[RMDB]
RNA sequence: GGGAACGACUCGAGUAGAGUCGAAAAGUGAGAAUGUUCGCAUUCUCACAAAUAAAUUCAGCGGUUUAAAUUAGGUCCGCAUAACCGCUGAUGCGGAGCUAAAAAGCUUGCCGUUCGCGGCAAGCAACAUAGUAUGGCACUUCGGUGCCAUACUAUGAAAAGAAACAACAACAACAAC
Reactivity to 2A3 in 0.01 (KOAc 150mM, MgCl2 10mM, bicine 150mM(pH8.5), 24C), signal-to-noise 2, nucleotides 027 to 126: g000u000g000a010g020a000a000u030g000u060u150c200g000c130a000u010u000c010u010c000a010c000a020a000a010u010a000a000a030u120u050c020a020g010c000g100g100u130u140u300a090a100a070u180u180a120g090g070u000c000c010g000c030a000u030a060a040c020c010g000c030u010g000a000u000g000c020g030g000a020g000c060u160a180a140a040a030a020g010c000u010u000g000c000c000g030u030u030c300g000c000g040g040c000a000a000g020c000a000a000
Reactivity to DMS in 0.01 (KOAc 150mM, MgCl2 10mM, bicine 150mM(pH8.5), 24C), signal-to-noise 1, nucleotides 027 to 126: g040u000g000a000g030a040a000u000g000u000u000c240g010c000a000u000u000c000u010c000a000c000a010a040a040u050a040a110a110u000u010c030a010g000c020g010g010u010u020u010a030a030a120u000u010a110g030g010u000c010c010g000c030a040u000a070a120c000c020g010c020u000g000a020u000g000c040g020g020a130g020c170u000a050a080a110a120a070g000c000u000u000g010c000c010g000u010u010c230g000c010g000g030c000a000a000g000c010a040a060